[RMDB]
RNA sequence: GGGAACGACUCGAGUAGAGUCGAAAAAAGGUGUUCGCACCUUGAGGAACCUUUGUGUAAGCAUAUGGCGAACCUUGGAUUUAGCUGUCCCAUUGGGACAGCUUGUCAGGUUCGCAUAUUCCCUUACACUCUGGUGCAGUCGCAUAUUCGUAUGCAAAGUACCCCAUCUAUUCGUAGAUGGGGUACUAAAAGAAACAACAACAACAAC
Reactivity to 2A3 in 0.01 (KOAc 150mM, MgCl2 10mM, bicine 150mM(pH8.5), 24C), signal-to-noise 3, nucleotides 027 to 156: a000a000g030g010u030g020u040u090c140g080c060a030c020c000u030u040g050a110g090g080a030a010c010c000u000u020u010g000u000g000u000a000a010g020c030a010u040a000u140g300g030c010g000a000a010c000c010u100u180g190g000a040u300u140u190a010g010c000u010g000u000c000c010c090a240u170u300g010g000g000a000c000a000g010c020u000u010g000u010c000a000g020g000u010u000c000g000c000a000u000a000u000u000c010c000c000u010u000a000c010a000c000u000c000u000g000g000u040g010c040a050g110u200c130g010c020a010u020a020u080u100c200g080u080a010u150g000c120a090a100
Reactivity to DMS in 0.01 (KOAc 150mM, MgCl2 10mM, bicine 150mM(pH8.5), 24C), signal-to-noise 1, nucleotides 027 to 156: a020a000g040g000u000g020u000u000c240g040c010a020c010c020u000u010g010a090g000g020a300a030c010c000u000u000u010g060u000g010u000a020a040g050c080a050u010a010u000g010g040c000g000a010a000c000c030u000u000g040g010a020u010u010u000a020g010c000u000g020u000c000c000c010a300u010u030g030g060g000a020c010a000g000c000u000u000g010u010c010a040g000g000u000u000c010g000c000a020u000a000u000u000c160c140c000u000u000a030c000a030c000u000c030u010g000g000u010g000c040a180g010u030c080g000c020a040u010a070u000u000c200g040u000a050u000g010c010a100a180